[RMDB]
RNA sequence: GGGAACGACUCGAGUAGAGUCGAAAAAUCAACUGAAGAUCAGCUAUUAGAAGAGAAAGAUCAGUUAAGUCCUUUGGACCUGAUCAGCUUGAUACAAGAACUACUGAUUUCAACUUCUUUGGCUUAAAAAAGGCCACAGAGUUCGCUCUGUGGCCAACGCUUUGAAAUACUUCGGUAUUUCAAAGCGAAAAGAAACAACAACAACAAC
Reactivity to 2A3 in 0.01 (KOAc 150mM, MgCl2 10mM, bicine 150mM(pH8.5), 24C), signal-to-noise 1, nucleotides 027 to 156: a000u060c040a060a090c070u130g100a130a040g080a140u040c030a000g010c000u050a040u250u040a110g010a020a010g000a030g020a000a140a020g010a000u010c000a000g000u040u050a060a020g000u050c060c010u070u130u240g020g040a010c030c000u000g040a030u040c020a000g090c010u060u080g010a030u030a090c060a080a030g030a110a000c040u110a030c000u120g000a000u010u000u090c060a070a050c000u000u000c020u000u070u030g020g030c000u040u020a010a100a020a000a000a030g020g000c000c000a000c000a000g000a000g080u030u110c080g080c100u010c000u010g000u000g010g000c000c000a000a000